[RMDB]
RNA sequence: GGGAACGACUCGAGUAGAGUCGAAAAGGGGUCGAGCAGGGAGGGAUCCCUAGAGCUUGGAUUUACACAGCUGAAGCCUCCACGGCUGUGUUGUCAGCUCUACCAUCCCGUUGAUCUGCUCGACGGAGGCACCCAAAUCCUCACUUCGGUGAGGAAACAACACUCAACGGUUCGCCGUUGAGUGUUGAAAAGAAACAACAACAACAAC
Reactivity to 2A3 in 0.01 (KOAc 150mM, MgCl2 10mM, bicine 150mM(pH8.5), 24C), signal-to-noise 1, nucleotides 027 to 156: g060g020g020g000u000c000g010a000g000c010a000g000g030g000a010g000g010g010a010u030c040c000c000u000a010g000a000g020c120u300u300g100g000a030u040u030u270a010c000a010c020a000g010c000u020g050a080a000g000c000c000u000c000c000a000c000g010g000c000u000g000u000g010u010u020g010u030c170a030g000c000u000c000u020a000c050c090a010u010c000c000c000g030u030u000g000a000u000c000u010g000c000u000c000g000a000c000g000g000a000g000g010c000a010c000c020c000a040a210a040u080c000c020u000c000a000c010u030u130c270g100g000u000g000a000g000g000a000a000a000
The record gives the reactivity of an RNA of 207 nucleotides to 2A3. The RNA was probed in 150 mM KOAc, 10 mM MgCl2 and 150 mM bicine (pH 8.5) at 24 C. For 2A3, 1,883 sequencing reads were counted. 2A3 adducts were read by reverse transcription with SuperScript II with manganese. The data come from the RNA Mapping Database (RMDB), library RNAMAK. Values cover nucleotides 27 to 156.